[RMDB]
The record gives the reactivity of an RNA of 177 nucleotides to DMS and 2A3. For 2A3 the reverse transcriptase was SuperScript II with manganese. It was measured as part of the RMDB libraries RFM100 and RFMREP.
RNA sequence: GGGAACGACUCGAGUAGAGUCGAAAAGGACUAGUACCGUGAGGGAAAGGUGAAAAGUACCCUGAAUAAGGGAGUGAAAUAGUACCUGAAACCUAGCGCUUACAAGCGGUCGGAGCCUACGGGUGACCAUGAGGAAGGGUUUCGACCCUUCCUCAUGAAAAGAAACAACAACAACAAC
Reactivity to DMS in 0.01 (KOAc 150mM, MgCl2 10mM, bicine 150mM(pH8.5), 24C), signal-to-noise 9, nucleotides 027 to 126: g010g030a080c030u010a100g000u020a090c300c030g020u010g000a090g020g000g000a080a150a040g000g010u010g000a060a110a120a110g000u050a110c000c000c000u000g000a130a070u070a140a030g000g010g010a150g020u020g010a080a050a070u020a090g010u020a020c010c000u000g010a080a140a200c010c000u000a100g010c040g000c070u000u040a080c200a080a110g010c050g000g020u010c070g000g010a160g000c010c020u000a100c090g010g000g010u000g000a080c140
Reactivity to 2A3 in 0.01 (KOAc 150mM, MgCl2 10mM, bicine 150mM(pH8.5), 24C), signal-to-noise 3, nucleotides 027 to 126: g040g010a030c060u050a020g040u110a030c000c030g030u070g130a080g010g040g050a110a030a030g050g000u040g050a040a060a000a020g080u160a160c000c000c010u010g030a040a050u280a160a000g010g040g010a020g030u090g050a020a020a040u140a020g060u030a040c000c000u010g010a080a060a050c000c000u020a050g090c020g030c070u140u160a080c050a160a080g010c010g000g020u010c030g020g000a020g040c020c020u010a020c060g060g000g000u080g020a040c030